[RMDB]
Background:
Structure probing data (2A3) for a 207-nucleotide construct. Reactivities are given for positions 27 through 156. The RNA was probed in 150 mM KOAc, 10 mM MgCl2 and 150 mM bicine (pH 8.5) at 24 C. Values are in units of 0.01, from 0 to 300, in steps of 10.

RNA sequence: GGGAACGACUCGAGUAGAGUCGAAAACUCUCCUCUGGGUUCGUACGUGAACCCGCCGAUAUAGGAGCCAGGCGGGAUAUAUGUCGAAUGUGCUUGCGUGAAACCAACGGCACCACUUGGCUCAACAUACAUCUGCUGGCCGCCUGGGACAAGCACAGCUAUAAUCGGUCUUCGGACCGAUUAUAGCAAAAGAAACAACAACAACAAC
Reactivity to 2A3 in 0.01 (KOAc 150mM, MgCl2 10mM, bicine 150mM(pH8.5), 24C), signal-to-noise 1, nucleotides 027 to 156: c010u000c000u000c000c010u060c060u110g000g000g030u080u010c000g070u170a230c170g000u070g060a030a030c000c030c010g020c030c020g000a040u070a000u070a160g100g000a000g010c020c020a010g010g000c000g000g000g090a020u050a020u030a040u160g150u130c080g030a170a090u050g050u000g010c010u070u120g030c060g120u100g100a180a000a040c040c050a030a040c060g020g000c030a010c000c000a020c010u030u040g010g000c030u050c030a060a010c000a010u200a000c100a010u040c050u110g170c060u100g170g000c020c010g000c000c000u000g000g000g020a030c000a000a000g040c020a000c000a060
The 2A3 profile rests on 551 reads.